The record gives the reactivity of an RNA of 177 nucleotides to DMS and 2A3. For 2A3 the reverse transcriptase was SuperScript II with manganese. The RNA was probed in 150 mM KOAc, 10 mM MgCl2 and 150 mM bicine (pH 8.5) at 24 C. For DMS, 2,222 sequencing reads were counted. DMS adducts were read by reverse transcription with MarathonRT.
[RMDB]
RNA sequence: GGGAACGACUCGAGUAGAGUCGAAAAGAUAUGGAUAUAGGGAGGAACUACUCCUAGUGUCGGAAACGACACGAAGGAGCCGAAGAACUAUAUCCUAAGUCAAAAGAUUGAGCUUCGGCUCAAUCAACUAACCUUAUUCCUUCGGGAAUAAGGUUAGAAAAGAAACAACAACAACAAC
Reactivity to DMS in 0.01 (KOAc 150mM, MgCl2 10mM, bicine 150mM(pH8.5), 24C), signal-to-noise 3, nucleotides 027 to 126: g010a050u000a300u000g010g000a010u000a010u000a010g010g000g010a160g000g030a120a050c060u000a300c000u000c010c000u010a180g000u000g020u000c000g010g000a080a070a150c000g000a000c010a000c000g000a090a140g000g000a010g010c050c100g010a060a080g000a230a150c000u000a000u010a000u000c000c000u000a020a080g010u000c030a110a100a110a130g000a020u000u000g000a010g020c000u000u020c270g020g000c000u000c000a000a000u000c010a090a230
Reactivity to 2A3 in 0.01 (KOAc 150mM, MgCl2 10mM, bicine 150mM(pH8.5), 24C), signal-to-noise 2, nucleotides 027 to 126: g000a010u080a050u150g000g000a000u010a010u000a010g020g020g020a040g020g000a070a120c090u190a070c000u260c000c000u010a010g010u000g000u010c010g000g010a040a040a090c010g000a000c010a000c000g010a030a080g000g000a000g030c010c010g140a180a020g020a040a010c010u010a000u020a010u010c000c000u020a090a010g030u020c040a010a000a090a250g000a000u010u010g010a000g000c000u050u180c300g080g000c000u000c000a000a000u000c000a020a000